[RMDB]
RNA sequence: GGGAACGACUCGAGUAGAGUCGAAAAGCAUGGCACAAGGGUGGCUUCGAGCUGAACUAUGUGAAAGGUCGCGAGUUCUCCGGCGAGACCAAGCAUGUCAACAAGGCCACUCUGAACAAAGAGUGGAUGGGGUGCUAAAAUUCGUUUUAGCACCCCAAAAAGAAACAACAACAACAAC
Reactivity to DMS in 0.01 (KOAc 150mM, MgCl2 10mM, bicine 150mM(pH8.5), 24C), signal-to-noise 1, nucleotides 027 to 126: g020c040a030u010g010g000c050a050c080a100a070g000g020g030u040g010g010c010u010u010c090g030a190g010c060u010g010a100a110c030u010a080u000g030u000g000a070a130a150g000g030u000c020g020c020g010a070g000u000u000c030u020c020c040g000g020c020g000a050g000a030c020c000a090a250g000c030a020u000g000u000c060a030a040c070a080a080g030g000c010c000a010c000u000c010u010g020a140a110c300a140a080a020g000a060g020u000g000g010a050

An RNA of 177 nucleotides, treated with DMS and read out base by base. Values are in units of 0.01, from 0 to 300, in steps of 10. The RNA was probed in 150 mM KOAc, 10 mM MgCl2 and 150 mM bicine (pH 8.5) at 24 C.